[RMDB]
This 177-nucleotide RNA was probed chemically with DMS.
For DMS the reverse transcriptase was MarathonRT.
RNA sequence: GGGAACGACUCGAGUAGAGUCGAAAAGCUCAGCCUGCAAGAGCUGACCAUACUUAUGUAGGAUUAGGGGGCAUCGGUGGGAACCCUGGUGUCCAAGGACAGUAUUGUCUGGUUGACUGAAGUUAGGGUCAGCACGAAAGUUCGCUUUCGUGCUGACAAAAGAAACAACAACAACAAC
Reactivity to DMS in 0.01 (KOAc 150mM, MgCl2 10mM, bicine 150mM(pH8.5), 24C), signal-to-noise 1, nucleotides 027 to 126: g000c070u020c030a130g020c020c020u000g000c030a090a080g000a090g050c000u000g000a290c020c020a100u010a040c170u000u030a070u010g030u000a040g020g020a230u000u010a090g000g000g010g000g010c010a020u000c050g000g010u000g010g040g020a130a160c040c010c010u000g030g010u000g020u010c000c020a100a110g000g020a030c020a040g000u000a080u030u010g000u010c020u000g000g080u000u000g000a070c030u000g020a090a130g000u010u000a130g040g000
Source: RMDB library OK2TRN, as collected in RNAgym. Values cover nucleotides 27 to 126. The reactions ran in a buffer of 150 mM KOAc, 10 mM MgCl2 and 150 mM bicine (pH 8.5), at 24 C.